[RMDB]
This 207-nucleotide RNA was probed chemically with 2A3 and DMS. For DMS, 2,367 sequencing reads were counted.

RNA sequence: GGGAACGACUCGAGUAGAGUCGAAAAAGAGAGAGAGAGAGCGAGCGCGCAAUAGGAGUCUCAGAGGCCAAACUCCGGCCAGUCAGGAGCCGGAAGGCUGAGCCCGGCUGACCUGACUUUGAGCUUCCCCGGAGUUAUCUCGCUUGGGCGCUCGCUAAAAUCACCGUAUAUUCGUAUACGGUGAUUUAAAAGAAACAACAACAACAAC
Reactivity to 2A3 in 0.01 (KOAc 150mM, MgCl2 10mM, bicine 150mM(pH8.5), 24C), signal-to-noise 2, nucleotides 027 to 156: a000g080a000g020a000g000a000g010a010g000a010g020a000g000c010g010a010g010c010g000c020g050c020a020a050u080a250g170g040a050g070u060c060u020c080a070g030a040g050g050c030c060a100a000a030c010u000c000c010g010g020c000c000a000g000u010c000a000g000g050a000g000c020c000g060g010a050a030g120g010c070u110g040a040g000c000c000c010g000g000c000u030g090a050c000c000u000g000a000c000u030u060u060g010a010g010c030u080u060c020c000c010c010g010g000a000g010u030u070a070u050c050u010c000g050c010u010u010g030g050g000c000g000c000u000c010g020c000u000a030
Reactivity to DMS in 0.01 (KOAc 150mM, MgCl2 10mM, bicine 150mM(pH8.5), 24C), signal-to-noise 1, nucleotides 027 to 156: a040g000a090g030a110g000a070g040a120g000a150g000a080g000c010g050a050g010c000g060c010g000c070a060a020u010a130g000g000a090g030u000c040u050c030a220g000a090g030g030c080c050a060a090a040c010u000c000c040g030g010c050c050a030g000u000c020a100g030g000a150g020c010c000g050g000a000a090g000g020c050u010g000a130g030c180c010c020g040g000c000u000g030a280c030c000u060g010a000c020u010u010u000g000a090g000c070u000u000c020c010c000c030g010g000a100g000u000u000a050u000c020u000c030g030c160u000u020g010g010g000c020g030c000u020c010g010c030u000a020
It was measured as part of the RMDB library OK3TST.
The RNA was probed in 150 mM KOAc, 10 mM MgCl2 and 150 mM bicine (pH 8.5) at 24 C.
As a SHAPE reagent, 2A3 marks flexible, mostly unpaired nucleotides at the ribose 2'-OH.